RNA sequence: GGGAACGACUCGAGUAGAGUCGAAAACAGGAGCAGCCCGGAGUCGCUCCACCACGUAGCGCCCCAGCAGUAGCAGCUCGGCGAAGUAGUCAGCGGCAGUGGCGAUCAGCGCAGCACCAGUCACGGCAGUAUGGCGUGAGUUCGCUCACGCCAUACUAAAAGAAACAACAACAACAAC
Reactivity to DMS in 0.01 (KOAc 150mM, MgCl2 10mM, bicine 150mM(pH8.5), 24C), signal-to-noise 1, nucleotides 027 to 126: c130a070g020g000a110g000c020a160g010c030c030c060g020g020a090g020u000c060g010c020u000c010c040a090c100c060a080c120g000u000a090g020c050g000c020c010c020c020a090g000c030a090g000u000a130g000c040a090g010c020u000c130g010g000c010g010a030a100g010u010a110g010u000c030a040g030c080g000g030c020a020g040u000g010g010c010g000a080u030c050a070g000c060g000c090a060g010c040a080c040c020a060g000u010c050a010c060g020g050c140
Structure probing data (DMS) for a 177-nucleotide construct.
The data come from the RNA Mapping Database (RMDB), library OK2TRN.
The RNA was probed in 150 mM KOAc, 10 mM MgCl2 and 150 mM bicine (pH 8.5) at 24 C.
For DMS the reverse transcriptase was MarathonRT.